[RMDB]
RNA sequence: GGGAACGACUCGAGUAGAGUCGAAAACAAGUUGCGAAGCGAUCCGUUAUAAGUACCUUCUGCAGUUAAUUUAACUGUGUGGUUAAAUUAUUCGCAAUUGAAUAUUUAUUUGUAAUCCACAAAUGAAGUUGGACUUCUGAUUCGUCAGAAGUCCAACAAAAGAAACAACAACAACAAC
Reactivity to 2A3 in 0.01 (KOAc 150mM, MgCl2 10mM, bicine 150mM(pH8.5), 24C), signal-to-noise 2, nucleotides 027 to 126: c090a010a000g030u030u000g010c060g010a020a020g070c060g060a070u090c080c010g120u170u080a150u030a260a040g110u010a020c010c000u130u130c060u190g000c010a000g020u010u010a050a270u110u190u300a020a000c000u000g010u010g000u070g060g000u000u100a140a040a000u200u010a190u040u010c010g010c000a000a020u040u060g030a010a000u090a100u160u190u020a030u000u000u040g030u060a010a080u060c030c000a040c090a010a010a020u110g050a090a000
This 177-nucleotide RNA was probed chemically with 2A3. Values are in units of 0.01, from 0 to 300, in steps of 10. 2A3 adducts were read by reverse transcription with SuperScript II with manganese. Source: RMDB library OK1LIB, as collected in RNAgym.